[RMDB]
RNA sequence: GGGAACGACUCGAGUAGAGUCGAAAAGAUAUGGACUCACCGGACGCCAGGGCAAUGUCGGAAACGAUGACCCUGGAACUACGUCCCGUGAGUCCUAAGUCAAAACGGCUAAGUUCGCUUAGCCGAAGUAAAUCCUACUCUUCGGAGUAGGAUUUACAAAAGAAACAACAACAACAAC
Reactivity to 2A3 in 0.01 (KOAc 150mM, MgCl2 10mM, bicine 150mM(pH8.5), 24C), signal-to-noise 2, nucleotides 027 to 126: g010a010u050a000u150g000g010a000c000u020c000a000c020c060g010g020a010c010g050c060c010a010g020g000g000c060a070a120u300g050u050c010g030g070a070a050a030c010g020a030u180g300a300c000c000c000u000g010g020a000a000c030u200a020c030g000u000c000c000c020g010u000g000a010g010u000c000c000u000a000a000g000u000c000a020a000a090a050c010g000g000c000u000a000a000g020u040u120c240g110c230u010u020a000g000c000c000g000a020a000
Reactivity to DMS in 0.01 (KOAc 150mM, MgCl2 10mM, bicine 150mM(pH8.5), 24C), signal-to-noise 3, nucleotides 027 to 126: g000a050u000a300u000g000g010a020c020u000c000a010c010c290g000g020a050c010g000c000c000a010g010g010g010c050a090a090u010g040u000c000g010g010a070a060a120c000g020a010u000g000a060c010c000c000u000g000g000a050a010c100u010a300c030g000u000c000c000c160g030u000g000a020g000u010c000c020u010a010a080g000u000c020a140a060a130a200c010g010g000c000u000a000a000g000u020u000c190g010c000u000u000a000g000c010c000g010a010a030